[RMDB]
This 177-nucleotide RNA was probed chemically with DMS and 2A3. The data come from the RNA Mapping Database (RMDB), library OK2TST. For DMS, 12,156 sequencing reads were counted.
RNA sequence: GGGAACGACUCGAGUAGAGUCGAAAAGAAUCUUCCUUUCGAGAACUAUGGCUUAACUAUUCAUAUAAAGGGGAAACACACUUCAGUUCCAUAUCUUCUAUCGAAAGAAUUUGUAAGCUCUGAAGGCCAUAGGUAUAAUAUUCGUAUUAUACCUAUGAAAAGAAACAACAACAACAAC
Reactivity to DMS in 0.01 (KOAc 150mM, MgCl2 10mM, bicine 150mM(pH8.5), 24C), signal-to-noise 9, nucleotides 027 to 126: g010a120a120u000c070u000u000c030c010u000u010u010c070g010a120g000a080a070c140u000a060u000g010g000c300u010u000a070a100c080u010a120u010u000c050a050u010a100u010a040a050a080g010g010g000g000a080a050a110c110a070c140a070c040u000u000c060a030g000u000u000c000c010a100u000a030u000c030u000u000c040u010a090u010c140g010a060a090a060g000a040a050u000u000u000g000u000a070a190g000c040u000c030u000g010a050a080g000g010c180
Reactivity to 2A3 in 0.01 (KOAc 150mM, MgCl2 10mM, bicine 150mM(pH8.5), 24C), signal-to-noise 7, nucleotides 027 to 126: g030a030a050u030c010u060u130c020c000u010u040u080c090g050a070g020a050a030c050u050a050u100g050g010c020u090u050a060a030c020u050a070u140u160c050a050u150a010u100a250a090a040g000g010g020g000a030a120a010c080a000c010a010c030u050u050c040a020g010u060u000c010c010a020u020a030u060c010u030u000c020u050a150u100c020g060a110a110a060g030a030a060u040u040u090g070u090a070a030g000c010u010c040u090g100a070a030g020g010c010